[RMDB]
The record gives the reactivity of an RNA of 177 nucleotides to 2A3 and DMS. For 2A3 the reverse transcriptase was SuperScript II with manganese. For DMS the reverse transcriptase was MarathonRT. The reactions ran in a buffer of 150 mM KOAc, 10 mM MgCl2 and 150 mM bicine (pH 8.5), at 24 C. For DMS, 20,503 sequencing reads were counted.
RNA sequence: GGGAACGACUCGAGUAGAGUCGAAAAACAGUAAAUAGUGCUAUCUACCUAGUAAAAUCAGCGACAUUAGGAAGCUAAGCAGAUGUUUUAGGGCACAGAAACAAAUCUUAUCAUGAGUGAGUUAAAACUAUAGUGUUACAUUCGUGUAACACUAUAGAAAAGAAACAACAACAACAAC
Reactivity to 2A3 in 0.01 (KOAc 150mM, MgCl2 10mM, bicine 150mM(pH8.5), 24C), signal-to-noise 8, nucleotides 027 to 126: a010c040a010g050u170a020a110a140u190a100g070u040g040c010u020a070u090c010u040a060c010c010u020a020g040u090a040a110a080a170u130c060a020g070c030g110a040c040a060u050u050a020g050g050a070a010g020c020u030a040a020g010c030a030g060a170u080g080u010u090u030u100a030g000g010g000c030a020c000a050g110a030a050a000c040a020a120a040u030c020u070u130a090u120c070a080u180g050a020g080u050g010a040g020u080u160a040a130a010a010
Reactivity to DMS in 0.01 (KOAc 150mM, MgCl2 10mM, bicine 150mM(pH8.5), 24C), signal-to-noise 9, nucleotides 027 to 126: a080c070a100g010u010a070a090a100u000a090g020u000g010c020u000a050u010c040u000a100c030c020u000a040g000u000a050a050a100a090u010c090a070g020c100g010a090c130a090u010u000a050g010g010a130a090g010c060u000a030a060g010c040a050g000a060u000g010u010u000u010u000a090g010g010g010c040a030c070a080g010a100a060a040c060a030a060a080u010c030u000u000a060u010c170a070u010g010a060g010u000g000a120g010u010u000a050a050a070a160